RNA sequence: GGGAACGACUCGAGUAGAGUCGAAAAUUUCAUAGUAGGUAGCCAAGCGUGGCAUGCAUUAUCUUAGGAAUCAUCUCCAUAGUCUGUGAGACAGCCCUGACUGCCCCAUUUUCCUUGAGGUUACGUUGCUCUUGUAAGGUCACUUCACUAGUAAGUAGAUUAAUCAGUAGUUCGCUACUGAUUAAUCAAAAGAAACAACAACAACAAC
Reactivity to DMS in 0.01 (KOAc 150mM, MgCl2 10mM, bicine 150mM(pH8.5), 24C), signal-to-noise 3, nucleotides 027 to 156: u000u000u000c030a160u000a120g030u000a060g040g010u000a080g010c020c010a060a160g010c090g020u000g020g030c060a090u000g030c060a090u000u010a040u000c030u010u030a100g010g020a090a080u000c060a090u010c030u000c000c030a090u000a130g020u000c090u010g020u000g000a110g000a060c010a070g000c010c030c070u000g000a080c040u010g000c010c010c010c010a170u010u000u000u000c010c040u000u010g010a090g010g020u000u000a070c100g010u010u000g000c010u000c070u000u000g020u000a050a120g000g030u000c040a050c060u000u010c040a090c070u010a080g010u010a030a100g010u000a130
Reactivity to 2A3 in 0.01 (KOAc 150mM, MgCl2 10mM, bicine 150mM(pH8.5), 24C), signal-to-noise 3, nucleotides 027 to 156: u040u050u020c040a020u040a060g050u020a040g010g030u040a020g000c030c020a140a000g100c100g090u080g040g000c030a040u060g010c010a040u080u080a070u240c050u060u100a030g000g080a060a040u050c020a020u020c060u000c030c010a020u020a070g120u030c070u060g070u060g080a020g030a070c020a020g010c000c030c000u040g040a070c030u050g000c000c010c040c040a060u080u060u010u070c020c000u030u070g040a030g040g000u040u020a010c050g070u080u060g000c010u020c010u110u030g030u040a040a040g030g020u020c010a000c010u030u020c040a020c070u060a070g040u070a100a030g030u050a050
Annotation
An RNA of 207 nucleotides, treated with DMS and 2A3 and read out base by base. DMS adducts were read by reverse transcription with MarathonRT. It was measured as part of the RMDB library OK3TST. The RNA was probed in 150 mM KOAc, 10 mM MgCl2 and 150 mM bicine (pH 8.5) at 24 C. For DMS, 8,162 sequencing reads were counted.